[RMDB]
RNA sequence: GGGAACGACUCGAGUAGAGUCGAAAAGAAAACAAGUACCGAGAACAUUGUUUUCGCUGCUUGGCGUUGCCGUUUUGUGUUGCAGUUGGUUGGGUAACGCCGCAAAUACCAACCGCAUAGAGAGAUAGCUAUAUAUCAUGUUCGCAUGAUAUAUAGCAAAAGAAACAACAACAACAAC
Reactivity to 2A3 in 0.01 (KOAc 150mM, MgCl2 10mM, bicine 150mM(pH8.5), 24C), signal-to-noise 9, nucleotides 027 to 126: g030a000a020a010a000c010a000a010g010u030a040c020c080g020a030g020a050a030c130a300u170u280g010u010u000u000u000c010g000c020u020g000c010u030u060g010g000c000g000u000u010g020c010c010g040u030u030u140u170g260u040g050u060u090g010c010a010g000u010u020g050g000u050u170g090g000g000u020a010a000c000g000c000c020g010c040a050a080a000u220a010c000c010a000a000c000c010g010c030a030u140a030g220a000g010a010g030a060u150a130
Reactivity to DMS in 0.01 (KOAc 150mM, MgCl2 10mM, bicine 150mM(pH8.5), 24C), signal-to-noise 7, nucleotides 027 to 126: g000a030a020a190a180c020a020a010g010u000a030c260c020g010a050g000a030a020c030a180u030u050g010u000u000u020u000c000g010c200u000g000c000u000u000g020g000c010g000u000u000g000c010c010g030u030u050u040u020g020u020g010u010u010g010c030a030g010u000u000g000g010u000u010g000g010g000u000a030a050c090g020c000c010g000c140a010a040a070u040a020c000c000a010a010c000c040g020c000a040u010a060g010a110g010a130g000a080u030a140
The record gives the reactivity of an RNA of 177 nucleotides to 2A3 and DMS.
The DMS profile rests on 22,640 reads.
The data come from the RNA Mapping Database (RMDB), library OK1LIB.